Notes:
Conditions: 150 mM KOAc, 10 mM MgCl2 and 150 mM bicine (pH 8.5), 24 C. This 177-nucleotide RNA was probed chemically with DMS. For DMS the reverse transcriptase was MarathonRT. Source: RMDB library OK2TST, as collected in RNAgym.
RNA sequence: GGGAACGACUCGAGUAGAGUCGAAAAUCGGCAAUCGCGAGGACGACGGAAAAACCGCGCUUCAGGUUGGAGGCGACGGCGCGUUCACGGGCGGCAUUUCGUCGUCCGGGCUCGACGCGGGCGGCGCGUACUUGGCGUCUUUCGAGACGCCAAGUACAAAAGAAACAACAACAACAAC
Reactivity to DMS in 0.01 (KOAc 150mM, MgCl2 10mM, bicine 150mM(pH8.5), 24C), signal-to-noise 2, nucleotides 027 to 126: u010c060g030g020c060a100a110u010c000g030c090g010a100g000g000a090c030g000a040c000g000g040a020a050a050a110a180c040c030g020c060g000c060u000u000c040a110g010g020u000u020g020g000a040g000g020c010g010a070c040g010g010c020g030c040g020u010u000c090a070c050g010g020g010c000g010g000c030a150u000u000u000c090g010u000c000g020u010c010c000g000g010g020c300u020c060g000a090c050g030c020g010g010g020c080g000g020c040g000c170